Source: RMDB library OK1LIB, as collected in RNAgym.
Chemical mapping of a 177-nucleotide RNA with DMS and 2A3.
For DMS, 2,880 sequencing reads were counted.
The reactions ran in a buffer of 150 mM KOAc, 10 mM MgCl2 and 150 mM bicine (pH 8.5), at 24 C.
[RMDB]
RNA sequence: GGGAACGACUCGAGUAGAGUCGAAAAUGCCGGAGGACGAUCGCGGCGAUGGGCCGCCGAACGGGCCGCCAUAGCUAUACGGCGGCGGUGGCGGGCCGGGUGGAUAGGUGUAGCCGCCCGACUGCGAGAAGAUCUCCAUUUUCGAAUGGAGAUCUUCAAAAGAAACAACAACAACAAC
Reactivity to DMS in 0.01 (KOAc 150mM, MgCl2 10mM, bicine 150mM(pH8.5), 24C), signal-to-noise 2, nucleotides 027 to 126: u040g000c000c020g050g010a130g000g010a080c090g000a080u030c210g000c070g040g010c030g000a130u030g000g010g020c000c000g020c020c000g000a040a120c030g010g000g000c010c010g000c020c000a030u020a160g070c100u000a120u020a080c150g030g000c020g000g010c030g000g010u000g000g000c010g010g000g020c000c000g000g000g030u040g000g000a010u020a110g010g000u000g000u030a270g030c030c060g000c010c030c000g000a080c040u010g000c030g000a190
Reactivity to 2A3 in 0.01 (KOAc 150mM, MgCl2 10mM, bicine 150mM(pH8.5), 24C), signal-to-noise 4, nucleotides 027 to 126: u180g060c010c000g010g020a060g090g020a090c040g060a050u050c030g010c010g010g000c030g010a050u120g020g070g030c000c000g000c000c000g020a050a020c010g000g080g030c000c010g000c010c000a040u050a090g010c050u170a050u130a300c180g050g000c060g010g000c000g050g010u020g000g000c000g000g030g010c010c000g020g000g020u090g010g020a110u090a220g070g000u120g070u110a020g010c000c000g050c000c000c000g070a110c030u050g010c030g030a080